[RMDB]
RNA sequence: GGGAACGACUCGAGUAGAGUCGAAAAGUCCUGGUAGUCAUCGACUACCGCACCCUUGGCCUCGUCCACGAGGUUCAGGACCUCCAGCGACUCCAGCUCGUACAGGCCGAGUUUCUCGCUCAGCAGGGACAGCUUGGCGAAGUCGCCGAUGUAGUCCAGGAUGAAUUGAUUUCGAUCAAUUCAUCCUAAAAGAAACAACAACAACAAC
Reactivity to 2A3 in 0.01 (KOAc 150mM, MgCl2 10mM, bicine 150mM(pH8.5), 24C), signal-to-noise 3, nucleotides 027 to 156: g010u060c000c030u020g030g000u020a000g000u000c060a300u170c300g020a020c000u010a010c000c000g060c010a080c020c050c000u030u110g010g000c020c010u050c020g070u130c130c050a190c120g010a000g010g000u100u170c040a010g010g000a020c000c040u090c040c030a030g000c000g010a000c010u030c050c070a050g030c030u030c100g030u070a130c030a060g100g000c030c010g000a000g000u020u070u060c090u040c030g010c000u080c030a060g010c020a060g000g050g060a040c020a000g010c010u100u230g010g000c030g030a010a010g010u020c010g000c010c010g010a050u130g050u140a020g050u010c040c050
Reactivity to DMS in 0.01 (KOAc 150mM, MgCl2 10mM, bicine 150mM(pH8.5), 24C), signal-to-noise 1, nucleotides 027 to 156: g020u010c010c000u000g040g000u010a010g010u010c000a190u000c150g010a040c000u000a000c000c020g010c070a110c060c020c040u000u000g100g000c000c000u000c040g040u010c170c200a170c060g000a030g010g000u000u000c030a120g020g000a130c000c000u000c000c030a080g000c000g050a030c000u010c020c020a070g010c020u000c130g020u000a090c040a070g010g000c030c010g010a030g030u000u000u000c190u010c140g020c020u000c040a060g020c010a050g000g020g000a090c010a110g000c020u000u000g010g060c080g030a040a050g000u000c000g030c000c000g010a100u000g000u000a160g010u000c010c050